[RMDB]
RNA sequence: GGGAACGACUCGAGUAGAGUCGAAAAGAUAGCUCGUUCGCGAGCUAUCAAAUAGGCGCAGUGGGCUAGCGCCACUCAAAAGCGCGAAAGGAAGAGAGAGAAAAAGGUGGUCCUUCGGGACCACCAAUCUCGAAAUCAGGUUCGCCUGAUUUCGAGAAAAAGAAACAACAACAACAAC
Reactivity to DMS in 0.01 (KOAc 150mM, MgCl2 10mM, bicine 150mM(pH8.5), 24C), signal-to-noise 1, nucleotides 027 to 126: g000a010u000a000g010c000u000c000g010u000u020c200g010c030g010a010g010c000u000a010u000c000a070a070a050u000a130g010g010c020g010c010a060g020u010g010g010g010c100u000a080g030c110g020c010c000a010c050u000c110a030a040a040a120g000c050g010c010g000a060a040a170g010g000a030a060g010a070g010a060g020a130g020a030a020a080a150a070g000g030u000g010g020u000c000c000u010u030c140g020g000g010a000c000c000a020c000c000a000a010
An RNA of 177 nucleotides, treated with DMS and read out base by base.
Source: RMDB library M2PK50, as collected in RNAgym.
The reactions ran in a buffer of 150 mM KOAc, 10 mM MgCl2 and 150 mM bicine (pH 8.5), at 24 C.